Structure probing data (2A3) for a 207-nucleotide construct.
[RMDB]
RNA sequence: GGGAACGACUCGAGUAGAGUCGAAAAACAGUACCAGCUGCUACGGCAGCUGGUACUGACCUUUCAUGGAGUUAAGAAACCACGUAAACAAAGCGGAACCGAAAAGCUAAACGAGUAGGAAGAAUAAAUAGGUACCACCACUUCGGUGGUGGUACAAGUGGAUCUAUACGUUCGCGUAUAGAUCCACAAAAGAAACAACAACAACAAC
Reactivity to 2A3 in 0.01 (KOAc 150mM, MgCl2 10mM, bicine 150mM(pH8.5), 24C), signal-to-noise 1, nucleotides 027 to 156: a000c010a000g000u000a000c000c010a010g000c000u000g030c000u000a030c120g110g000c000a000g000c040u000g030g000u010a000c000u000g010a000c000c000u030u130u140c070a100u060g000g010a050g010u060u020a040a040g100a160a060a000c010c010a040c060g050u090a040a040a080c060a120a170a000g000c000g000g040a020a120c020c000g000a010a000a010a020g000c050u210a210a090a000c000g000a000g000u010a010g100g040a030a000g040a010a150u210a070a050a020u160a150g130g000u010a000c000c000a030c010c000a000c000u040u040c180g060g000u000g000g000u000g000g010u000a000c000a000a000
Conditions: 150 mM KOAc, 10 mM MgCl2 and 150 mM bicine (pH 8.5), 24 C. Source: RMDB library M2RFPK, as collected in RNAgym.